[RMDB]
RNA sequence: GGGAACGACUCGAGUAGAGUCGAAAACACCACACCUAGAGCCACGCUUUGAAGGAUCUGCCAAGCUCACUUUUAAUCAUGAGAAAGAAAUUACCCACAUGGAGUCAGCAGAAAAUGAGAAAGUAGAACAAGGGGAACCAUUCGUGGUUCCCCUUGUAAAAGAAACAACAACAACAAC
Reactivity to 2A3 in 0.01 (KOAc 150mM, MgCl2 10mM, bicine 150mM(pH8.5), 24C), signal-to-noise 1, nucleotides 027 to 126: c010a000c000c000a000c000a000c000c000u020a020g000a050g180c000c120a170c000g090c120u060u010u080g170a080a050g020g000a030u000c030u010g000c050c000a000a000g000c000u010c000a100c180u000u170u170u300a150a070u140c010a190u100g010a070g110a040a190a000g000a080a130a000u040u160a030c000c000c000a010c000a030u180g020g060a050g110u140c000a050g000c020a050g000a030a060a060a000u060g000a020g140a110a100a000g040u020a080g000a080
Reactivity to DMS in 0.01 (KOAc 150mM, MgCl2 10mM, bicine 150mM(pH8.5), 24C), signal-to-noise 1, nucleotides 027 to 126: c120a140c020c000a090c100a090c020c070u040a080g000a040g020c040c000a130c040g000c010u000u000u000g010a080a080g000g000a070u000c000u030g000c000c050a030a130g000c000u000c040a110c080u000u000u000u000a040a180u000c030a090u030g010a100g000a090a040a050g000a150a040a040u010u000a060c120c000c060a060c220a120u000g000g030a030g040u000c080a090g000c020a080g050a040a030a120a020u030g000a140g000a020a110a010g050u000a050g030a240